[RMDB]
RNA sequence: GGGAACGACUCGAGUAGAGUCGAAAAGCGUACUACGUGUCCCAUCGCUCAACAGCCUUGGAACUACUGCUUCCCAAAUAGGAAGCAGCCAAGGACAUGAGCCUCUAGGACACGUAUCGCAAAGGUGAGAUGAUGGAUUCGUCCAUCAUCUCACCAAACAAUCUUUUAUCUUCGGAUAAAAGAUUGUAAAAGAAACAACAACAACAAC
Reactivity to 2A3 in 0.01 (KOAc 150mM, MgCl2 10mM, bicine 150mM(pH8.5), 24C), signal-to-noise 5, nucleotides 027 to 156: g010c010g040u100a080c070u000a000c030g000u000g010u000c000c020c000a080u250c140g000c000u000c010a050a130c050a220g060c000c010u010u020g010g020a070a050c060u210a050c010u300g010c010u010u040c010c010c030a220a300a040u270a060g010g000a000a000g020c000a000g000c000c000a000a000g000g000a010c010a160u030g000a000g000c000c000u010c010u020a010g000g000a010c000a010c010g000u000a000u040c020g010c040a080a110a040g000g000u010g000a000g000a000u000g000a000u000g010g010a010u050u080c270g020u010c020c000a000u000c000a000u000c000u000c000a000c000c000a000a000
Reactivity to DMS in 0.01 (KOAc 150mM, MgCl2 10mM, bicine 150mM(pH8.5), 24C), signal-to-noise 2, nucleotides 027 to 156: g020c020g030u000a050c110u000a020c010g010u000g010u010c000c000c010a020u000c060g000c020u000c000a040a070c080a200g010c000c010u000u000g020g020a090a220c070u010a300c020u010g000c000u000u000c000c000c020a040a200a250u010a090g010g010a030a010g000c000a020g000c000c020a020a020g020g010a020c070a270u010g010a040g010c000c030u000c030u010a050g000g000a020c000a030c000g000u000a010u000c000g030c010a060a100a120g000g000u010g010a020g020a030u000g000a040u000g020g010a080u000u000c300g020u000c000c000a010u000c000a000u010c000u010c000a000c000c010a010a020
Chemical mapping of a 207-nucleotide RNA with 2A3 and DMS. Source: RMDB library RNAMAK, as collected in RNAgym. The 2A3 profile rests on 6,554 reads. Reactivities are given for positions 27 through 156. 2A3 is a SHAPE reagent: it acylates the 2'-hydroxyl of flexible nucleotides of all four kinds.